[RMDB]
RNA sequence: GGGAACGACUCGAGUAGAGUCGAAAAGAUAUGGAGUCACAUGGUCGAUAAGCUAAGUGUCGGAAACGACACUAGCUUUUGACGACUGGUGACUCCUAAGUCAAAACGUGGGAGUUCGCUCCCACGACAUAUAUAAGUACUUCGGUACUUAUAUAUGAAAAGAAACAACAACAACAAC
Reactivity to 2A3 in 0.01 (KOAc 150mM, MgCl2 10mM, bicine 150mM(pH8.5), 24C), signal-to-noise 8, nucleotides 027 to 126: g020a000u020a020u070g000g000a000g000u010c010a010c090a280u200g030g010u010c040g090a230u100a300a010g000c010u070a300a190g010u000g000u000c010g000g010a020a010a010c010g000a000c010a000c000u000a000g000c000u000u010u020u120g220a130c040g000a000c010u010g010g000u000g000a000c000u000c000c000u000a000a000g000u000c010a000a010a050a120c030g000u010g010g000g000a030g020u110u160c260g100c100u000c000c000c000a000c000g000a000
Reactivity to DMS in 0.01 (KOAc 150mM, MgCl2 10mM, bicine 150mM(pH8.5), 24C), signal-to-noise 9, nucleotides 027 to 126: g000a020u000a110u010g000g000a010g010u000c000a010c000a060u010g020g030u000c000g010a100u010a010a010g010c000u000a030a140g020u000g010u000c000g010g000a020a020a050c000g020a020c000a010c000u000a000g010c000u000u000u000u000g020a170c100g010a000c000u000g010g000u000g000a010c000u000c000c000u000a000a050g000u000c010a140a070a090a180c040g030u000g010g010g010a020g020u000u020c290g010c000u000c000c000c000a000c010g010a090